RNA sequence: GGGAACGACUCGAGUAGAGUCGAAAAGGGAUGCCUCCAUUCUGGAUCAGGAGUCCAAGCCCAACCAGGCAGAGGGCAAACUUUCGCCGGAGCUGGAGCACUUCCAGAAAACCUCCUUUGAGGAGGUCACACUUGAGAUCUUCGGAUCUCAAGUGUGAAAAGAAACAACAACAACAAC
Reactivity to DMS in 0.01 (KOAc 150mM, MgCl2 10mM, bicine 150mM(pH8.5), 24C), signal-to-noise 1, nucleotides 027 to 126: g030g020g000a100u000g040c280c040u000c000c000a020u000u000c000u000g000g000a150u020c100a120g000g010a080g000u020c010c060a050a300g020c010c000c030a080a100c300c150a070g010g100c060a060g010a300g000g000g010c040a010a040a190c030u000u010u000c190g000c010c000g000g020a060g020c300u000g010g000a030g000c030a040c160u000u000c000c000a100g000a030a010a050a070c000c000u000c000c000u000u000u010g000a080g030g010a000g010g000u000
Reactivity to 2A3 in 0.01 (KOAc 150mM, MgCl2 10mM, bicine 150mM(pH8.5), 24C), signal-to-noise 1, nucleotides 027 to 126: g020g030g040a040u020g010c030c050u000c010c000a020u040u000c010u030g020g000a040u140c060a060g020g030a010g000u000c010c020a030a020g020c010c000c020a040a080c030c020a020g050g050c080a070g010a130g110g000g040c080a220a300a000c040u100u180u160c170g000c010c010g000g000a010g010c100u010g000g010a000g000c020a020c110u090u000c000c000a000g060a030a090a030a030c010c000u010c000c040u070u110u300g130a100g020g000a000g000g030u000